[RMDB]
RNA sequence: GGGAACGACUCGAGUAGAGUCGAAAAGGUCCUCGCUUCGGCGAGGACCAGAGCACCACUCCUGCGGGAGUUAAGGCCAAACGGACAGCCGCGUGCAAAGCCAAUUGUUUAAGUUCGCUUAAACAAAUCAGCAAAACAUAUUCGUAUGUUUUGCUGAAAAAGAAACAACAACAACAAC
Reactivity to 2A3 in 0.01 (KOAc 150mM, MgCl2 10mM, bicine 150mM(pH8.5), 24C), signal-to-noise 1, nucleotides 027 to 126: g020g000u010c010c010u010c020g040c020u060u080c230g030g000c000g000a000g000g000a010c000c000a000g010a000g010c020a010c010c000a010c010u010c000c000u070g030c180g070g020g000a010g010u010u140a080a050g040g000c000c000a070a130a100c050g010g030a010c000a030g040c040c010g040c080g070u030g010c060a050a030a010g070c020c000a060a110u070u030g020u000u000u010a010a010g020u040u110c270g000c090u000u000a010a010a010c010a000a030a040
Reactivity to DMS in 0.01 (KOAc 150mM, MgCl2 10mM, bicine 150mM(pH8.5), 24C), signal-to-noise 3, nucleotides 027 to 126: g000g010u000c000c000u000c000g020c000u000u030c220g050g010c000g020a000g010g010a000c000c000a000g000a070g000c080a040c030c200a080c010u000c000c000u000g050c140g060g000g000a020g000u000u000a060a100g010g010c010c040a050a060a120c190g000g000a070c130a170g020c020c020g010c110g010u010g010c030a060a060a160g000c010c020a070a200u010u000g000u010u000u000a010a010g000u000u000c230g010c010u000u000a000a000a000c000a020a040a130